[RMDB]
RNA sequence: GGGAACGACUCGAGUAGAGUCGAAAAAUCCGCCUACGCAUUGCUAAUUGAUGGUCCUUGCACAUGUGUAGCCGCGUUGCUCUCAAUGAUCGGAGCCCGAUAUGCCAUCAAAUUCCUCUGCCGCGCAAUCAUAAAAUGGAUUCGUCCAUUUUAUGAUAAAAGAAACAACAACAACAAC
Reactivity to 2A3 in 0.01 (KOAc 150mM, MgCl2 10mM, bicine 150mM(pH8.5), 24C), signal-to-noise 9, nucleotides 027 to 126: a000u020c010c010g000c020c010u030a020c020g010c010a020u010u060g020c020u110a160a080u150u120g080a070u110g090g040u080c040c030u040u090g020c020a070c010a070u040g010u010g010u050a010g020c040c020g040c020g050u060u100g010c000u000c010u010c040a060a200u160g030a090u120c040g030g020a030g040c010c010c010g030a040u060a040u170g020c010c000a020u020c000a020a060a060u060u030c010c000u030c020u040g020c020c000g040c010g000c050a040
Reactivity to DMS in 0.01 (KOAc 150mM, MgCl2 10mM, bicine 150mM(pH8.5), 24C), signal-to-noise 9, nucleotides 027 to 126: a070u010c040c020g010c200c010u000a030c040g000c020a030u000u000g010c030u010a070a120u010u000g010a080u010g010g010u010c110c090u010u010g010c020a040c210a030u000g020u000g010u000a030g010c100c060g010c140g010u000u000g000c050u010c050u000c060a090a090u000g000a070u000c070g010g010a120g020c030c040c030g010a080u000a060u010g010c020c010a040u000c050a040a080a160u000u000c030c020u000c050u010g010c030c030g020c100g010c130a120
Record summary
An RNA of 177 nucleotides, treated with 2A3 and DMS and read out base by base. 2A3 is a SHAPE reagent: it acylates the 2'-hydroxyl of flexible nucleotides of all four kinds. For DMS the reverse transcriptase was MarathonRT. The reactions ran in a buffer of 150 mM KOAc, 10 mM MgCl2 and 150 mM bicine (pH 8.5), at 24 C.